[RMDB]
RNA sequence: GGGAACGACUCGAGUAGAGUCGAAAAGGGCUCGUGAGAGCAGCCUGGGGAACCUGGUUAUAAUAGCGGCGCUAUCAGAAAUUCAACGCUAUCAAAUUUUGAUGGUGAUGGGAACGGCGCUAGCAACACAUGCCAAGUCAUUCGUGACUUGGCAUGUAAAAGAAACAACAACAACAAC
Reactivity to DMS in 0.01 (KOAc 150mM, MgCl2 10mM, bicine 150mM(pH8.5), 24C), signal-to-noise 2, nucleotides 027 to 126: g030g000g000c010u050c050g010u050g000a240g010a040g010c000a130g000c030c000u040g030g030g010g030a110a100c020c010u000g010g030u000u000a070u040a150a060u030a210g000c000g010g000c020g000c020u010a100u030c170a220g000a140a100a060u040u000c010a050a060c000g020c030u020a000u000c010a000a130a250u040u010u020u000g000a000u000g000g010u000g010a040u010g000g000g000a080a040c040g000g010c010g000c000u010a070g040c050a110a050c160
Reactivity to 2A3 in 0.01 (KOAc 150mM, MgCl2 10mM, bicine 150mM(pH8.5), 24C), signal-to-noise 3, nucleotides 027 to 126: g010g000g020c020u030c030g080u130g080a120g000a020g070c040a010g020c000c000u050g070g000g000g000a010a010c000c000u020g010g080u140u170a100u060a170a140u180a110g010c020g020g000c000g000c010u040a010u100c060a050g110a090a100a030u090u060c000a010a030c000g000c000u000a000u000c000a010a060a140u150u210u110u070g010a030u010g000g000u010g000a130u050g060g040g020a030a030c030g010g000c000g020c000u010a050g000c000a000a090c020